[RMDB]
RNA sequence: GGGAACGACUCGAGUAGAGUCGAAAACUCUUUAACUUUUGUUAAGAAAUGAUCAUCUGCCAGCUCAAUUUCAAAGAAAGGUCCGACUGUUAAAAGGGAUGAUUUGUUGUCUCUUUGCGUUUUGUUACAUAGAAGUGGAAUUCGUUCCACUUCUAUGAAAAGAAACAACAACAACAAC
Reactivity to DMS in 0.01 (KOAc 150mM, MgCl2 10mM, bicine 150mM(pH8.5), 24C), signal-to-noise 7, nucleotides 027 to 126: c050u010c040u030u010u010a020a040c030u000u020u010u020g010u010u010a050a070g010a060a110a060u010g000a070u010c050a040u010c040u000g010c040c020a050g030c080u000c060a050a070u010u010u030c100a080a090a090g010a050a080a060g000g010u000c040c020g000a070c070u000g010u010u010a040a030a040a030g010g000g010a030u010g010a060u010u010u030g020u000u010g000u010c010u000c010u000u010u010g010c210g010u000u010u010u010g000u010u010a130
Reactivity to 2A3 in 0.01 (KOAc 150mM, MgCl2 10mM, bicine 150mM(pH8.5), 24C), signal-to-noise 3, nucleotides 027 to 126: c020u010c000u050u070u050a030a020c020u100u070u140u300g090u020u130a060a020g040a050a120a070u160g010a040u020c000a030u020c030u030g000c010c000a020g010c030u040c030a040a150u000u090u050c080a110a090a030g130a020a080a010g060g010u060c000c050g040a050c040u080g010u200u150a030a060a010a080g040g010g000a030u040g050a020u070u050u150g240u080u060g010u010c020u000c000u020u030u080g070c030g020u000u050u110u140g040u000u050a020
This 177-nucleotide RNA was probed chemically with DMS and 2A3. The data come from the RNA Mapping Database (RMDB), libraries RFM100 and RFMREP. DMS (dimethyl sulfate) methylates the pairing face of unpaired adenines and cytosines. As a SHAPE reagent, 2A3 marks flexible, mostly unpaired nucleotides at the ribose 2'-OH. The RNA was probed in 150 mM KOAc, 10 mM MgCl2 and 150 mM bicine (pH 8.5) at 24 C.